[RMDB]
RNA sequence: GGGAACGACUCGAGUAGAGUCGAAAAUGUCCAAAGGCAGGCUCAGUGAGAACAGAAAUCUCACGUAGAGUAAAAGGGCAAAAGCCUGCUUGAUUCUGAUUUUCAGUACUAAUCGGAACUGGGAAACACUACCAAAUCCGUUCGCGGAUUUGGUAGUAAAAGAAACAACAACAACAAC
Reactivity to 2A3 in 0.01 (KOAc 150mM, MgCl2 10mM, bicine 150mM(pH8.5), 24C), signal-to-noise 1, nucleotides 027 to 126: u190g010u000c000c000a140a010a000g000g000c070a040g000g000c020u010c000a000g000u010g010a000g000a010a030c070a160g270a090a050a060u020c000u000c000a000c000g010u050a040g010a000g070u130a010a010a010a010g080g050g030c070a010a000a180a000g000c030c020u030g000c000u000u040g100a210u060u000c030u000g020a110u010u000u000u080c040a000g000u040a060c130u070a140a000u070c060g020g010a050a080c000u070g000g000g000a040a130a000c080
Reactivity to DMS in 0.01 (KOAc 150mM, MgCl2 10mM, bicine 150mM(pH8.5), 24C), signal-to-noise 1, nucleotides 027 to 126: u080g000u000c020c020a140a100a040g000g020c000a010g000g000c000u000c090a290g040u000g000a000g020a030a000c150a220g010a200a100a020u000c000u030c010a030c030g050u020a040g010a160g000u000a080a120a140a120g000g000g010c070a060a010a080a010g070c010c000u050g000c060u010u010g020a240u020u000c080u000g000a090u020u000u010u020c000a060g020u000a080c090u000a070a030u010c060g030g000a060a000c060u000g000g000g000a000a040a000c200
An RNA of 177 nucleotides, treated with 2A3 and DMS and read out base by base. DMS adducts were read by reverse transcription with MarathonRT. Values are in units of 0.01, from 0 to 300, in steps of 10. For 2A3, 689 sequencing reads were counted. It was measured as part of the RMDB library RFM100. For DMS, 1,329 sequencing reads were counted. Values cover nucleotides 27 to 126.